[RMDB]
RNA sequence: GGGAACGACUCGAGUAGAGUCGAAAACGAACUCAUUCAGAGCUUUGGUGCUAUGAGAACUGUCUUCCAUCAAGGUGAGAAUGGUGUCAAGCAUGUUUGCGAUACCUUGGGUCUUAAAGGGAUAUGGUCAAUCUCGUGAGUUCGCUCACGAGAUUGAAAAAGAAACAACAACAACAAC
Reactivity to 2A3 in 0.01 (KOAc 150mM, MgCl2 10mM, bicine 150mM(pH8.5), 24C), signal-to-noise 3, nucleotides 027 to 126: c020g030a040a020c010u020c010a020u080u010c020a000g010a020g150c000u070u000u030g060g040u050g030c060u130a160u300g040a090g020a200a120c070u130g100u110c000u120u000c040c000a010u010c010a020a040g000g030u160g050a010g030a020a020u040g050g010u120g030u040c040a080a030g040c010a070u170g050u120u110u100g010c030g020a010u080a080c020c000u010u040g070g000g030u010c020u050u140a080a070a070g100g060g030a040u100a050u200g100g010
Reactivity to DMS in 0.01 (KOAc 150mM, MgCl2 10mM, bicine 150mM(pH8.5), 24C), signal-to-noise 3, nucleotides 027 to 126: c080g010a090a070c050u000c010a040u000u000c040a040g000a170g000c010u000u000u000g000g020u010g010c120u010a050u020g030a040g010a100a110c270u010g000u000c020u000u000c130c000a010u010c030a020a030g000g000u020g000a300g010a030a020u010g010g010u000g010u010c110a060a100g020c140a080u020g010u010u000u000g030c080g010a050u000a070c070c010u000u000g010g020g000u000c030u010u000a060a090a070g010g000g020a080u000a080u000g020g010